An RNA of 177 nucleotides, treated with 2A3 and DMS and read out base by base.
RNA sequence: GGGAACGACUCGAGUAGAGUCGAAAAGUGAUAAACUCGAUUUAACAUUUAUUUGUAAUUCUUACCACUGACCAUUCAUCUUCAUGCGAUGUCUGCCUCUCGAUCUCCCUCUGGCAGUGGGAGUUUGUACUCCCUCAGGAUUCGUCCUGAGGGAGUAAAAAGAAACAACAACAACAAC
Reactivity to 2A3 in 0.01 (KOAc 150mM, MgCl2 10mM, bicine 150mM(pH8.5), 24C), signal-to-noise 2, nucleotides 027 to 126: g000u030g030a060u090a040a070a020c020u040c070g100a150u110u040u060a150a040c040a080u100u130u120a180u100u160u070g030u070a070a100u070u000c010u040u090a080c000c000a010c050u070g050a200c030c000a030u050u070c020a050u040c050u040u050c020a040u110g080c000g060a020u050g070u050c010u020g060c010c010u040c010u000c020g020a080u020c000u000c030c000c010u010c040u030g050g020c010a000g000u070g000g000g000a000g000u010u000u060g010
Reactivity to DMS in 0.01 (KOAc 150mM, MgCl2 10mM, bicine 150mM(pH8.5), 24C), signal-to-noise 3, nucleotides 027 to 126: g010u000g000a060u000a020a040a070c100u020c200g010a100u000u000u000a080a050c020a040u000u000u020a120u030u000u010g000u000a060a060u000u010c020u010u000a110c010c010a040c010u000g010a090c040c020a040u000u010c050a060u010c040u010u010c100a050u010g010c110g010a080u000g010u000c060u010g010c030c020u000c030u010c050g010a090u000c030u000c010c000c010u010c080u010g000g000c050a060g010u000g000g000g010a040g010u000u000u000g020
Description:
For DMS, 3,601 sequencing reads were counted.